[RMDB]
RNA sequence: GGGAACGACUCGAGUAGAGUCGAAAAUUUAAGAGAAGAUCUGAGGUUGUUCGUGGCGCUGACGAACCUACCGAGGAGGAAAUUAAGAAGGGUGAAGCUGCCGAUGAGAACGAAAAGAAAGAACCUACCAAAAUAUAGGGUUCGCCCUAUAUUUUGGAAAAGAAACAACAACAACAAC
Reactivity to DMS in 0.01 (KOAc 150mM, MgCl2 10mM, bicine 150mM(pH8.5), 24C), signal-to-noise 2, nucleotides 027 to 126: u010u010u000a090a130g010a060g020a080a100g010a130u000c020u000g010a250g000g000u000u000g010u000u010c030g020u010g010g030c070g030c050u000g010a070c050g030a080a070c000c090u000a040c060c020g000a220g000g000a060g000g020a040a060a060u000u010a060a090g020a080a130g010g010g000u010g000a120a040g000c040u010g010c070c040g010a080u010g020a040g000a040a090c030g010a050a060a030a110g010a100a070a120g000a080a100c100c050u000a140